[RMDB]
RNA sequence: GGGAACGACUCGAGUAGAGUCGAAAACGCCAAUAAUUAACGGUGCAUAUCUUGAUGAAUACGUACAUUGACCGCUUGUGUUGAAUAUCGCCAACCCGGCAGUUCCUGGGCUUGGCGGCUCAGGAAAAAUACCUACUGAGUUCGCUCAGUAGGUAUUAAAAGAAACAACAACAACAAC
Reactivity to DMS in 0.01 (KOAc 150mM, MgCl2 10mM, bicine 150mM(pH8.5), 24C), signal-to-noise 7, nucleotides 027 to 126: c130g020c020c010a080a120u010a100a090u010u000a070a100c090g010g020u000g000c080a050u000a040u000c060u000u000g010a120u010g000a100a050u000a070c120g010u010a070c110a100u000u000g010a060c050c030g010c090u000u000g010u000g000u000u000g010a070a060u000a060u000c070g010c020c010a050a110c020c010c060g000g020c110a120g000u010u000c010c000u000g010g000g000c050u000u010g020g010c160g000g000c020u000c010a020g000g010a000a040a050
Reactivity to 2A3 in 0.01 (KOAc 150mM, MgCl2 10mM, bicine 150mM(pH8.5), 24C), signal-to-noise 2, nucleotides 027 to 126: c030g040c020c020a020a060u210a060a090u180u140a050a050c060g050g000u050g010c030a030u030a030u150c030u120u170g090a150u080g050a160a060u130a100c040g020u030a020c040a090u000u090g070a070c050c070g060c090u140u190g050u030g010u120u110g090a090a050u110a050u160c000g010c000c000a020a030c020c000c000g030g010c060a060g010u060u030c000c000u010g000g020g010c010u020u020g060g000c000g010g000c010u000c010a000g000g010a000a080a000
Structure probing data (DMS and 2A3) for a 177-nucleotide construct.
The reactions ran in a buffer of 150 mM KOAc, 10 mM MgCl2 and 150 mM bicine (pH 8.5), at 24 C.
2A3 adducts were read by reverse transcription with SuperScript II with manganese.
Reactivities are given for positions 27 through 126.
Source: RMDB library OK2TRN, as collected in RNAgym.
For 2A3, 2,268 sequencing reads were counted.
DMS (dimethyl sulfate) methylates the pairing face of unpaired adenines and cytosines.